[RMDB]
RNA sequence: GGGAACGACUCGAGUAGAGUCGAAAAUGAGACACCUUCGGGUGUCUCACAUUAAGCAGACCAGCUAUGAGGUCAAUAUCGUCAUGCACAAAUAGAAUAAAACAGCUUGCUCCUUCGGGAGCAAGAAACCAUUCUAUUGGUUCGCCAAUAGAAUGGUAAAAGAAACAACAACAACAAC
Reactivity to DMS in 0.01 (KOAc 150mM, MgCl2 10mM, bicine 150mM(pH8.5), 24C), signal-to-noise 4, nucleotides 027 to 126: u000g000a030g000a000c000a000c000c000u010u020c180g040g010g020u000g000u000c000u000c000a010c080a050u000u000a070a110g000c100a100g000a120c030c010a110g010c040u000a050u000g010a100g000g000u000c070a070a090u010a030u010c100g000u000c040a030u010g020c060a070c150a050a040a100u000a080g010a050a090u000a050a060a060a080c140a090g010c010u000u000g000c010u000c000c000u000u020c240g020g000g000a010g000c000a000a000g000a010a070
Reactivity to 2A3 in 0.01 (KOAc 150mM, MgCl2 10mM, bicine 150mM(pH8.5), 24C), signal-to-noise 5, nucleotides 027 to 126: u060g010a000g000a000c010a000c020c020u030u050c230g030g010g000u000g000u030c000u000c010a010c000a000u050u040a040a020g030c020a020g030a040c020c010a010g010c020u070a120u130g120a070g010g030u030c040a100a120u100a090u180c070g070u030c030a050u070g030c060a030c030a080a130a060u170a090g150a120a080u160a140a100a010a020c010a000g020c000u000u010g000c000u020c010c000u040u050c130g060g000g000a010g030c000a000a000g000a000a000